Description: Chemical mapping of a 207-nucleotide RNA with 2A3 and DMS. 2A3 adducts were read by reverse transcription with SuperScript II with manganese.
RNA sequence: GGGAACGACUCGAGUAGAGUCGAAAACAACCUGGGAGUUACGUCCGGAUAUUGCACCAGGCGCAAUAGAACGGUAGACAUCAACUGAUGCGAGAGCAUCUCAACUUAUGGACCUUAGUGUAUCGCAAGACGACAGGUCCUGUCGGAAUUGCGUAGAAUCAUAUUACGCCUUCGGGCGUAAUAUGAUAAAAGAAACAACAACAACAAC
Reactivity to 2A3 in 0.01 (KOAc 150mM, MgCl2 10mM, bicine 150mM(pH8.5), 24C), signal-to-noise 2, nucleotides 027 to 156: c030a010a080c020c010u070g000g020g060a070g050u150u100a050c020g060u010c000c010g000g000a020u010a050u090u060g010c060a100c050c160a150g190g000c030g000c010a020a020u010a030g040a170a030c020g040g000u050a080g060a150c020a080u100c040a000a120c060u030g000a000u030g010c000g000a080g000a010g100c000a010u020c020u010c060a060a130c030u120u100a110u200g000g110a020c000c020u070u090a040g000u120g000u220a100u080c030g020c000a000a030g050a000c000g000a000c000a030g240g170u100c070c000u000g010u000c000g030g020a180a230u000u020g000c000g000u040a000g060a020
Reactivity to DMS in 0.01 (KOAc 150mM, MgCl2 10mM, bicine 150mM(pH8.5), 24C), signal-to-noise 1, nucleotides 027 to 156: c020a080a190c010c040u030g060g030g010a220g000u010u000a070c000g000u000c000c020g000g050a250u000a050u000u000g040c030a080c010c020a060g000g030c000g010c040a030a070u000a070g020a080a070c030g010g030u000a080g010a260c040a080u020c150a020a120c020u020g010a030u000g000c020g010a300g000a240g030c010a030u000c000u000c050a050a160c110u000u040a060u010g000g030a040c020c000u000u010a120g000u000g000u000a030u000c010g000c150a040a130g000a260c050g030a070c190a020g000g030u000c080c020u010g020u010c010g020g010a150a110u000u010g040c020g000u000a120g000a130

For DMS, 1,973 sequencing reads were counted.